RNA sequence: GGGAACGACUCGAGUAGAGUCGAAAAUAUGUAAUUUAUUUUAGGCUAUAAUACAUUUCCUAUUUUCGCAUUUUCAAUAAAAUGUCUCUAAUACAAUACGGUGAUUGCUUGUGUGCUCAACAUACCUGCAGUUGAAACGUAUUGUAUCAAUGAACAAGUAGUGCACUCAUUUCGAUGAGUGCACUACAAAAGAAACAACAACAACAAC
Reactivity to 2A3 in 0.01 (KOAc 150mM, MgCl2 10mM, bicine 150mM(pH8.5), 24C), signal-to-noise 1, nucleotides 027 to 156: u100a020u000g030u070a090a230u020u070u080a070u090u070u010u240a050g040g000c080u040a010u060a250a100u080a020c020a030u000u020u020c010c010u150a230u060u010u050u140c050g020c040a050u070u020u050u210c160a120a120u180a200a000a070a130u030g000u000c060u000c010u040a030a030u000a020c000a000a020u000a000c020g100g000u250g020a010u000u040g000c000u010u010g000u000g010u000g040c090u070c220a070a160c000a070u040a010c020c010u010g000c000a020g000u020u010g130a230a240a000c000g000u030a000u000u000g000u000a000u000c010a020a170u090g060a030a010c000a000a080